[RMDB]
RNA sequence: GGGAACGACUCGAGUAGAGUCGAAAAGAUAUGGACGUGUAGCUCUUUUGACGUUGUUCGGAAACGAAUACAACGAUAAGAGCUACACGUCCUAAGUCAAACUACGAAUUCUUCGGAAUUCGUAGAACGUAACGCGGAAGUUCGCUUCCGCGUUACGAAAAGAAACAACAACAACAAC
Reactivity to DMS in 0.01 (KOAc 150mM, MgCl2 10mM, bicine 150mM(pH8.5), 24C), signal-to-noise 1, nucleotides 027 to 126: g020a050u000a300u000g010g000a010c000g120u010g000u000a010g010c000u000c010u000u030u000u000g010a150c120g000u000u000g000u000u000c000g000g000a080a040a180c000g020a030a030u010a090c010a000a010c010g060a130u020a010a000g000a000g000c000u000a000c000a000c010g010u000c000c000u030a000a040g000u000c030a100a120a160c020u000a000c000g000a000a000u000u000c000u000u010c160g000g000a000a010u000u000c040g010u000a000g010a030a090
Source information
The data come from the RNA Mapping Database (RMDB), library TTRDEL. Structure probing data (DMS) for a 177-nucleotide construct. Reactivities are rounded to 0.1 and cut off at 0 and 3. For DMS, 1,124 sequencing reads were counted.